[RMDB]
RNA sequence: GGGAACGACUCGAGUAGAGUCGAAAAUUACCACAUCGAUCAAGCCGUGAUUCUCGCUCCCUGACAGGAGUUAUCACUAUGGUAUCCACAAACCCUGAAUUGGGUAAGCCCCUUGGUACUGAUCAAGGUUAGGGGUUAGUUUCGACUAACCCCUAACAAAAGAAACAACAACAACAAC
Reactivity to DMS in 0.01 (KOAc 150mM, MgCl2 10mM, bicine 150mM(pH8.5), 24C), signal-to-noise 3, nucleotides 027 to 126: u010u010a090c010c020a100c240a050u010c120g000a030u000c070a090a140g010c070c040g030u010g000a050u000u000c170u000c250g000c030u000c010c000c020u000g030a170c250a140g000g000a050g000u000u000a020u010c030a030c050u010a080u000g020g010u000a030u000c050c080a080c130a090a080a100c020c000c000u000g000a110a070u010u000g010g030g000u000a060a130g000c060c010c020c030u010u000g000g010u010a050c150u000g000a060u000c020a110a060g020
Reactivity to 2A3 in 0.01 (KOAc 150mM, MgCl2 10mM, bicine 150mM(pH8.5), 24C), signal-to-noise 2, nucleotides 027 to 126: u050u030a050c010c000a020c030a110u100c050g040a040u020c050a120a020g040c050c020g020u000g010a020u100u040c080u010c110g050c020u000c000c000c000u010g060a020c020a050g000g030a020g000u050u070a040u020c000a000c010u040a100u120g010g040u020a060u070c040c030a090c040a070a080a080c040c000c000u180g070a300a110u230u070g000g000g000u010a020a040g060c000c010c010c020u010u030g000g000u060a090c070u070g030a040u040c030a030a020g110